An RNA of 207 nucleotides, treated with 2A3 and DMS and read out base by base.
Conditions: 150 mM KOAc, 10 mM MgCl2 and 150 mM bicine (pH 8.5), 24 C.
The data come from the RNA Mapping Database (RMDB), library ARCHII.
For DMS the reverse transcriptase was MarathonRT.

RNA sequence: GGGAACGACUCGAGUAGAGUCGAAAAGCUUCGAAGUUUCGACUUCGAAGCCAAGGGCUAUUAGCUCAGUGGUAGAGCGCGCCCCUGAUAAGGGCGAGGUCUCUGGUUCAAGUCCAGGAUGGCCCACCAUAAGUCGAUUGCUCUUCGGAGCAAUCGAGACUCACUUAUACUUCGGUAUAAGUGAGUCAAAAGAAACAACAACAACAAC
Reactivity to 2A3 in 0.01 (KOAc 150mM, MgCl2 10mM, bicine 150mM(pH8.5), 24C), signal-to-noise 4, nucleotides 027 to 156: g000c000u000u000c000g010a000a010g020u020u070u230c170g090a040c010u000u000c010g010a020a000g000c010c000a080a070g000g000g000c000u000a000u020u010a020g000c000u000c020a030g020u080g140g280u200a000g000a000g010c010g000c000g000c000c000c000c000u070g070a110u100a300a040g000g010g000c000g000a010g000g000u010c010u000c000u030g000g000u000u020c000a000a000g000u000c010c000a010g010g010a000u000g000g020c130c000c000a010c000c010a060u160a120a040g100u020c000g000a000u000u010g000c000u010c000u020u140c250g070g000a000g000c010a000a000u000c000g000a000
Reactivity to DMS in 0.01 (KOAc 150mM, MgCl2 10mM, bicine 150mM(pH8.5), 24C), signal-to-noise 2, nucleotides 027 to 156: g010c010u000u020c000g040a050a040g060u010u000u010c270g010a120c000u010u000c010g010a000a020g040c000c020a050a020g020g000g030c000u030a090u000u000a140g040c010u000c030a180g000u000g070g000u020a040g000a010g010c000g000c000g030c010c000c000c010u000g020a200u000a160a070g030g000g020c020g020a040g000g040u000c000u010c000u000g010g020u000u000c100a120a300g020u000c000c000a030g000g010a070u000g040g010c000c000c000a040c010c000a090u000a070a090g000u000c000g010a000u010u000g020c000u000c000u000u000c300g080g020a040g000c010a010a000u020c000g000a010
For 2A3, 4,180 sequencing reads were counted.